[RMDB]
RNA sequence: GGGAACGACUCGAGUAGAGUCGAAAAUCAAGCCUCGUAUAAAUGACAUCCUCCAGAACAUGUGCUCUGUGCCUGCCUUCCUUCCGUCAGUGAUGUAUCUGGAAGAUUCCACUGUGUCGCCCUGUGGGACAGGUCCUUGUCAUUGCUGAGUAGAUCAGUUUUAGCACCUCUUCGGAGGUGCUAAAACAAAAGAAACAACAACAACAAC
Reactivity to 2A3 in 0.01 (KOAc 150mM, MgCl2 10mM, bicine 150mM(pH8.5), 24C), signal-to-noise 1, nucleotides 027 to 156: u060c020a050a000g010c060c050u050c000g070u150a060u030a050a120a060u080g020a010c010a080u090c000c030u050c030c000a010g020a020a070c070a060u100g060u100g120c000u030c050u110g030u040g050c000c040u030g000c060c000u050u030c020c030u000u140c000c030g130u020c000a110g000u020g030a020u010g070u060a200u030c060u050g060g000a000a050g030a090u020u020c000c000a010c010u020g020u050g100u180c010g010c040c030c030u000g000u020g010g060g000a010c010a020g140g010u030c130c100u020u060g030u000c000a090u000u070g000c010u020g000a000g040u060a040g180a070u110c110a050

About this RNA:
Structure probing data (2A3) for a 207-nucleotide construct. 2A3 adducts were read by reverse transcription with SuperScript II with manganese.